[RMDB]
RNA sequence: GGGAACGACUCGAGUAGAGUCGAAAACGUCACGAACACAAUAUUGCUUGCCUGUGUCAACACGAUUGGAUCUUCACGAAAGGCCGAAAACCCAAUUGAGAAGAAAUCGAUUCCUGACGGCCCGGUCCAGCCAACUAUUCUUCGGAAUAGUUGGCUGAAAAGAAACAACAACAACAAC
Reactivity to DMS in 0.01 (KOAc 150mM, MgCl2 10mM, bicine 150mM(pH8.5), 24C), signal-to-noise 2, nucleotides 027 to 126: c040g020u000c010a080c210g010a050a040c040a220c080a060a100u000a070u010u010g030c150u000u000g000c080c130u000g000u000g010u020c130a050a130c140a050c080g000a020u000u000g010g010a070u020c040u000u000c010a040c020g000a040a040a300g010g020c050c060g000a060a050a100a130c300c010c010a000a270u010u000g000a060g020a020a020g000a020a060a040u000c080g010a160u000u000c020c010u000g000a060c020g000g010c000c000c030g000g070u040c090
Reactivity to 2A3 in 0.01 (KOAc 150mM, MgCl2 10mM, bicine 150mM(pH8.5), 24C), signal-to-noise 2, nucleotides 027 to 126: c010g000u020c010a000c100g060a070a000c080a000c020a160a090u140a180u200u300g060c100u100u160g000c040c060u070g040u050g000u080c030a070a030c060a040c100g030a000u000u000g020g000a050u010c000u030u020c050a010c080g060a090a080a020g020g000c010c050g150a120a100a090a050c000c000c030a010a060u070u070g080a070g000a030a010g030a040a010a010u020c010g010a020u040u010c010c060u010g000a000c000g030g000c030c000c030g000g050u000c030